[RMDB]
This 177-nucleotide RNA was probed chemically with 2A3 and DMS.
RNA sequence: GGGAACGACUCGAGUAGAGUCGAAAAUCAGGAGGUAGUGUAAGUAAUGUUCUAGCUUACUGUAACAAUCUUUACUUAACCAAAGAACAAUUAGGCUUUUCUGCUGAAGAUACAGAACAUCUAAGUGUCCAGUAUCUUCAUUCGUGAAGAUACUGGAAAAAGAAACAACAACAACAAC
Reactivity to 2A3 in 0.01 (KOAc 150mM, MgCl2 10mM, bicine 150mM(pH8.5), 24C), signal-to-noise 2, nucleotides 027 to 126: u080c030a000g040g030a000g020g030u030a020g030u070g000u100a000a050g000u010a030a140u100g050u110u020c050u060a050g040c010u020u000a030c030u060g020u110a040a050c040a050a100u020c020u040u050u050a050c020u060u080a030a020c010c020a090a110a020g040a020a020c000a060a120u120u100a050g060g000c020u080u040u050u060c030u050g000c020u060g020a070a010g000a040u040a090c060a010g060a050a010c020a040u000c020u070a100a050g070u050g060
Reactivity to DMS in 0.01 (KOAc 150mM, MgCl2 10mM, bicine 150mM(pH8.5), 24C), signal-to-noise 4, nucleotides 027 to 126: u010c120a100g020g010a110g000g030u000a030g030u000g000u000a100a050g010u010a090a070u000g010u010u000c040u000a230g000c090u000u000a020c100u010g010u010a130a080c120a070a080u000c060u010u000u000a070c070u010u010a050a150c080c040a050a060a080g000a030a060c050a050a120u010u000a060g000g020c070u000u010u010u000c040u010g000c120u010g010a110a060g000a100u010a080c080a050g010a030a070c220a030u000c070u010a050a060g020u000g000
Source information:
For DMS, 3,045 sequencing reads were counted. For 2A3, 1,742 sequencing reads were counted.